Description:
This 177-nucleotide RNA was probed chemically with 2A3 and DMS. Source: RMDB library OK2TST, as collected in RNAgym. The RNA was probed in 150 mM KOAc, 10 mM MgCl2 and 150 mM bicine (pH 8.5) at 24 C. 2A3 adducts were read by reverse transcription with SuperScript II with manganese.
RNA sequence: GGGAACGACUCGAGUAGAGUCGAAAAGGUCUCCGGAGGUCUCAUUCUGCCCCUCAGGGCUGCUGCGGUGGUGCUCCAGUCGGUGCCCGUGGUCUCGGUGAUCCUCAUCCUCCUCAUCUGGGUGGGGGCUAAUGACAGAUUUCGAUCUGUCAUUAGCAAAAGAAACAACAACAACAAC
Reactivity to 2A3 in 0.01 (KOAc 150mM, MgCl2 10mM, bicine 150mM(pH8.5), 24C), signal-to-noise 3, nucleotides 027 to 126: g020g010u030c020u010c020c020g090g000a030g030g050u040c030u010c070a070u190u020c030u120g030c000c010c010c000u060c060a050g000g050g000c040u060g000c020u030g010c040g050g040u080g050g050u060g020c010u040c010c020a030g080u060c000g060g000u060g040c020c010c000g020u030g000g000u020c010u010c040g050g020u060g020a050u030c010c000u020c000a030u000c010c000u040c020c020u110c020a240u020c080u090g070g010g030u030g020g000g020g020
Reactivity to DMS in 0.01 (KOAc 150mM, MgCl2 10mM, bicine 150mM(pH8.5), 24C), signal-to-noise 4, nucleotides 027 to 126: g010g010u000c020u000c020c050g020g010a100g010g010u000c050u010c060a120u000u000c070u010g000c040c020c020c110u010c120a140g010g010g020c030u000g020c070u000g010c080g010g020u000g000g020u010g000c030u000c020c030a070g020u000c070g010g030u000g010c030c020c020g020u000g010g010u000c010u000c030g010g010u000g000a090u010c010c020u000c030a050u000c020c010u000c050c120u010c080a080u000c070u010g010g010g020u000g000g000g000g000